[RMDB]
RNA sequence: GGGAACGACUCGAGUAGAGUCGAAAAACUGGUGCAUCGGUUGUACUGUCAAGUGCAUGGCCGAGUAGCUAAGUGCGGACGGGAUAAGCGCUGAAAGCAUCUAAGCGCCAAGCCCUUCCCAAGAUGAGUCAUUUUUAGACUUCGGUCUAAAAAUGACAAAAGAAACAACAACAACAAC
Reactivity to 2A3 in 0.01 (KOAc 150mM, MgCl2 10mM, bicine 150mM(pH8.5), 24C), signal-to-noise 5, nucleotides 027 to 126: a000c000u000g040g020u060g040c140a100u000c020g000g000u030u000g010u000a000c020u040g290u300c120a160a030g000u000g000c000a030u100g130g000c000c000g000a000g000u000a000g010c010u060a110a060g040u050g110c140g060g030a050c030g020g000g000a020u040a030a040g000c010g000c010u000g080a120a080a030g060c020a040u040c020u030a060a000g000c000g000c000c000a070a110g030c000c000c000u010u000c010c000c030a030a010g080a110u160g020a010
Reactivity to DMS in 0.01 (KOAc 150mM, MgCl2 10mM, bicine 150mM(pH8.5), 24C), signal-to-noise 4, nucleotides 027 to 126: a050c010u000g010g000u000g020c110a300u010c000g000g020u000u000g050u010a020c020u000g010u080c300a070a030g010u000g000c040a050u070g000g000c020c000g000a010g000u030a240g000c010u000a020a050g030u010g040c140g000g010a200c130g020g000g000a040u000a140a190g000c030g020c000u000g000a140a140a100g010c150a060u010c070u000a160a070g000c010g010c000c030a070a190g000c010c020c010u000u020c000c000c010a110a120g010a100u030g000a200